This 177-nucleotide RNA was probed chemically with 2A3. Values are in units of 0.01, from 0 to 300, in steps of 10. The reactions ran in a buffer of 150 mM KOAc, 10 mM MgCl2 and 150 mM bicine (pH 8.5), at 24 C.

[RMDB]
RNA sequence: GGGAACGACUCGAGUAGAGUCGAAAAUGCUGCGAGCUGCCGAGUUAUACGACGGCACAUUACGGUUCCUGCUGUGGACCGCCGCACUGUUUAGUGCUCUAGCGUUAUCGCUAAUAUAACUCAACGACGUCGCGUGAUCAUUCGUGAUCACGCGACGAAAAGAAACAACAACAACAAC
Reactivity to 2A3 in 0.01 (KOAc 150mM, MgCl2 10mM, bicine 150mM(pH8.5), 24C), signal-to-noise 1, nucleotides 027 to 126: u090g000c000u050g020c000g070a000g000c000u000g050c000c000g030a030g000u000u000a300u070a140c140g000a000c000g080g070c040a000c000a070u120u200a010c160g000g000u000u140c000c000u070g100c110u080g000u300g030g000a190c030c000g000c040c000g050c000a000c000u030g060u180u160u030a020g020u000g000c000u050c010u080a060g000c000g200u220u150a120u200c040g000c000u000a030a020u000a000u000a030a040c070u010c120a000a120c010g170a000